[RMDB]
RNA sequence: GGGAACGACUCGAGUAGAGUCGAAAACGUCGAUGAGACACCGCCCACCUCCAGCUGUGGAGCUAACUCCCGCUGGGAGGACAUCGGUAGGUGGGCAGUUUGGGUGGGGCGCCACUCCCCCGAAAAGUGAUCAACAUGGUUUCGACCAUGUUGAUCAAAAAGAAACAACAACAACAAC
Reactivity to DMS in 0.01 (KOAc 150mM, MgCl2 10mM, bicine 150mM(pH8.5), 24C), signal-to-noise 3, nucleotides 027 to 126: c130g000u000c010g000a110u030g000a300g000a030c010a170c070c080g000c010c000c020a030c000c000u000c000c000a070g040c010u030g000u070g020g040a040g000c070u010a110a110c000u000c040c000c000g000c160u020g030g020g000a060g000g010a100c160a090u040c120g020g000u070a020g010g010u000g010g010g030c000a010g010u000u000u020g010g020g030u000g000g020g000g030c150g000c000c000a060c020u000c000c010c000c000c030g040a040a080a040a120g020
Reactivity to 2A3 in 0.01 (KOAc 150mM, MgCl2 10mM, bicine 150mM(pH8.5), 24C), signal-to-noise 5, nucleotides 027 to 126: c030g030u000c010g040a160u200g070a000g010a040c000a010c010c000g000c020c000c000a000c000c000u010c000c010a020g000c030u110g060u300g220g110a020g000c030u150a130a110c000u000c000c020c000g150c130u160g030g000g000a040g010g010a020c020a090u080c080g040g020u080a020g000g000u010g000g000g000c030a050g040u050u070u090g030g020g030u140g010g020g020g030c080g070c030c000a020c020u010c000c000c000c000c000g030a040a020a020a010g120

An RNA of 177 nucleotides, treated with DMS and 2A3 and read out base by base.
The reactions ran in a buffer of 150 mM KOAc, 10 mM MgCl2 and 150 mM bicine (pH 8.5), at 24 C.
DMS (dimethyl sulfate) methylates the pairing face of unpaired adenines and cytosines.
2A3 adducts were read by reverse transcription with SuperScript II with manganese.
Values cover nucleotides 27 to 126.